RNA sequence: GGGAACGACUCGAGUAGAGUCGAAAAGACUGUUGAAGAUGAUGCAUCCACAGCCAAGUUGUCUAAGAAAAAGCGAUUUCCCCUACCUGAGGUUGGAGUGCAAGAGACAUUGUCCACCUACAAUGUAUAUAAAUCAUUUGAGAAAAAAGGGAAAGAGCAAACUCGUACAGUUCGCUGUACGAGUUUGAAAAGAAACAACAACAACAAC
Reactivity to DMS in 0.01 (KOAc 150mM, MgCl2 10mM, bicine 150mM(pH8.5), 24C), signal-to-noise 2, nucleotides 027 to 156: g010a070c030u000g040u000u000g010a090a100g000a040u000g040a080u010g050c040a150u000c030c020a030c000a080g000c020c010a150a300g020u010u000g000u020c040u010a120a110g000a070a060a060a060a150g010c030g000a270u000u000u000c010c000c000c030u000a090c060c000u020g010a060g010g010u000u000g020g000a100g000u010g000c050a060a100g010a190g020a040c030a050u000u000g020u010c040c070a080c070c010u000a100c030a010a030u000g000u010a100u000a160u010a040a040a070u020c010a130u010u010u000g010a130g000a020a030a040a060a060a040g000g000g000a020a010a080g010a150g010
Reactivity to 2A3 in 0.01 (KOAc 150mM, MgCl2 10mM, bicine 150mM(pH8.5), 24C), signal-to-noise 2, nucleotides 027 to 156: g040a060c070u100g020u110u070g050a040a070g040a060u180g000a030u130g100c000a040u000c040c000a010c000a040g000c000c030a050a100g020u050u010g030u070c050u070a100a120g080a160a160a060a010a000g110c100g010a070u010u050u030c000c060c000c040u040a040c000c050u030g040a010g050g000u090u130g010g060a040g020u030g010c050a080a130g010a030g020a080c010a070u010u030g040u050c050c000a010c020c020u020a040c000a000a000u030g000u080a050u020a070u000a170a120a010u060c030a040u050u070u220g040a070g090a020a040a020a040a020a030g000g020g010a040a010a030g050a010g040